[RMDB]
RNA sequence: GGGAACGACUCGAGUAGAGUCGAAAAGAUAUGGACAAGUGCGUCCGAUAAGUUGAGAUCGGAAACGAUCUUCAACUUUUGACGGACCCUUGUCCUAAGUCAAAAGAGAUAAGUUCGCUUAUCUCAACUAUCCUACUACCUUCGGGUAGUAGGAUAGAAAAGAAACAACAACAACAAC
Reactivity to 2A3 in 0.01 (KOAc 150mM, MgCl2 10mM, bicine 150mM(pH8.5), 24C), signal-to-noise 3, nucleotides 027 to 126: g000a010u010a000u050g010g000a000c000a010a010g030u070g090c090g010u160c000c010g020a110u130a110a010g000u000u010g000a010g000a000u010c010g010g000a020a010a000c010g000a000u020c020u070u040c000a000a010c000u010u060u060u230g300a150c020g000g010a000c000c000c000u010u010g000u000c000c000u000a020a000g000u010c020a010a020a150a110g020a000g000a000u010a000a000g030u030u170c240g120c210u000u010a000u000c000u000c010a000a000
Reactivity to DMS in 0.01 (KOAc 150mM, MgCl2 10mM, bicine 150mM(pH8.5), 24C), signal-to-noise 3, nucleotides 027 to 126: g000a030u000a160u020g000g010a010c000a010a020g010u010g020c240g010u000c000c010g020a120u010a010a010g020u000u000g010a020g010a010u000c000g020g000a030a040a100c010g000a010u000c000u010u010c010a010a010c000u010u000u000u010g010a190c090g000g000a020c000c000c000u000u000g000u000c000c000u000a000a080g010u010c010a140a090a120a130g020a020g010a010u000a000a000g010u000u010c300g020c020u000u000a010u000c000u000c000a100a190
This 177-nucleotide RNA was probed chemically with 2A3 and DMS. The RNA was probed in 150 mM KOAc, 10 mM MgCl2 and 150 mM bicine (pH 8.5) at 24 C. The 2A3 profile rests on 7,962 reads. It was measured as part of the RMDB library TTRDES. For DMS, 4,770 sequencing reads were counted. 2A3 adducts were read by reverse transcription with SuperScript II with manganese.